An RNA of 177 nucleotides, treated with DMS and 2A3 and read out base by base. For DMS, 3,686 sequencing reads were counted. For 2A3 the reverse transcriptase was SuperScript II with manganese. DMS adducts were read by reverse transcription with MarathonRT. The reactions ran in a buffer of 150 mM KOAc, 10 mM MgCl2 and 150 mM bicine (pH 8.5), at 24 C.

RNA sequence: GGGAACGACUCGAGUAGAGUCGAAAAGUCGUUAAGACGGCGACGACAUCUGCCCAGCGGUUGCCGUCUGCGGUCGAGGGUACCAGGCGCCGUGGGCUUGCUUCUCUCAAACUGGUUAUCGGGCGACACUCGACAAUGUAUUCGUACAUUGUCGAGUAAAAGAAACAACAACAACAAC
Reactivity to DMS in 0.01 (KOAc 150mM, MgCl2 10mM, bicine 150mM(pH8.5), 24C), signal-to-noise 3, nucleotides 027 to 126: g010u000c010g030u020u010a140a060g010a040c030g000g020c000g000a010c000g000a040c040a080u010c140u000g000c000c010c010a160g020c060g010g010u010u000g040c010c000g010u010c020u010g020c040g000g000u000c040g010a090g000g020g000u010a060c030c040a080g010g020c120g010c020c040g010u000g010g010g020c010u020u000g010c140u000u000c060u000c060u010c110a060a080a090c050u000g000g000u000u010a080u000c040g000g000g010c010g020a080c170
Reactivity to 2A3 in 0.01 (KOAc 150mM, MgCl2 10mM, bicine 150mM(pH8.5), 24C), signal-to-noise 3, nucleotides 027 to 126: g000u010c000g020u030u060a050a000g010a000c000g010g000c020g010a000c000g000a000c000a110u050c060u130g010c010c010c010a050g130c030g090g020u080u130g000c000c000g000u010c010u020g010c050g030g050u070c050g040a100g070g080g050u050a050c000c020a010g040g010c010g010c030c010g030u040g020g010g010c040u020u080g050c030u130u030c060u000c020u000c090a100a090a200c040u020g030g000u100u080a110u080c040g060g040g000c040g030a020c010